[RMDB]
RNA sequence: GGGAACGACUCGAGUAGAGUCGAAAAGGCGUCUUCGCUGCCUCGGCCGCCAUGCACUGACCGGUAGCCGCCGUAAUAGCGGCAUUGUUCCCAUAAACGGAUGUGGGUGUGGGUGCCGAAGUAGCAGCGUACGCUAUAUAUUCGUAUAUAGCGUACGAAAAGAAACAACAACAACAAC
Reactivity to 2A3 in 0.01 (KOAc 150mM, MgCl2 10mM, bicine 150mM(pH8.5), 24C), signal-to-noise 9, nucleotides 027 to 126: g100g040c070g110u040c070u140u100c110g010c010u000g000c000c000u000c000g010g000c020c030g040c020c010a090u080g010c020a020c060u090g130a080c010c010g020g010u030a030g000c010c000g000c010c000g020u050a050a040u120a130g000c000g020g000c010a010u030u270g010u020u010c010c000c000a020u110a020a200a010c010g010g020a070u130g060u130g230g050g010u030g010u040g010g020g050u090g000c000c000g010a020a000g010u030a000g000c020a000g020
Reactivity to DMS in 0.01 (KOAc 150mM, MgCl2 10mM, bicine 150mM(pH8.5), 24C), signal-to-noise 9, nucleotides 027 to 126: g010g010c120g010u000c060u000u000c120g020c000u000g010c010c040u000c010g010g010c010c070g010c010c010a040u000g010c010a040c010u000g010a130c020c010g000g010u000a120g010c010c000g020c000c050g020u010a130a090u020a100g010c000g000g010c010a090u010u010g010u000u000c000c000c000a180u010a040a120a100c020g000g010a180u010g010u000g000g010g030u000g020u000g000g000g010u000g000c000c010g000a020a030g020u000a040g010c010a140g010